[RMDB]
RNA sequence: GGGAACGACUCGAGUAGAGUCGAAAAUUUCUUAGCUUUAUAGAUGUUGAGAUAAUAUCUUUUGAGGAACACAUGUCAAGCAGGAACCUUGGCAUAGAUUUGGUUUCAGUUGUUUUAAGGCUUAAUUAAUGAAAUGCCUUAAUCAGCUUUCCAAACAAUUAAUCGGUAAUUUCGAUUACCGAUUAAUAAAAGAAACAACAACAACAAC
Reactivity to DMS in 0.01 (KOAc 150mM, MgCl2 10mM, bicine 150mM(pH8.5), 24C), signal-to-noise 3, nucleotides 027 to 156: u010u000u010c000u000u000a120g010c030u000u000u000a080u010a080g030a090u000g010u010u010g030a180g010a150u000a070a090u000a150u000c040u000u000u030u030g030a130g030g010a080a090c090a080c070a050u010g020u000c000a010a040g010c050a190g020g010a170a120c190c010u010u000g000g010c040a050u000a060g000a180u000u010u000g010g000u000u000u000c110a030g040u000u000g010u000u000u020u000a000a010g000g050c010u000u000a060a170u010u010a070a180u020g000a130a070a110u000g010c000c010u000u000a000a020u000c020a030g000c010u000u000u000c010c000a040a050a060c060a090
Reactivity to 2A3 in 0.01 (KOAc 150mM, MgCl2 10mM, bicine 150mM(pH8.5), 24C), signal-to-noise 4, nucleotides 027 to 156: u090u110u040c020u050u040a070g010c010u080u180u140a170u110a110g050a080u050g020u050u060g030a040g020a030u140a170a060u060a140u080c030u060u130u100u090g120a060g060g050a110a020c030a010c010a120u010g000u000c000a000a010g030c040a100g140g160a030a040c020c000u000u000g010g000c020a030u020a030g060a050u020u030u020g020g030u020u040u070c040a020g010u000u000g030u040u080u020u020a000a000g000g000c000u020u080a100a090u140u110a100a060u300g140a130a090a060u170g000c000c000u000u000a000a000u000c000a000g000c000u020u020u000c000c000a060a010a000c010a030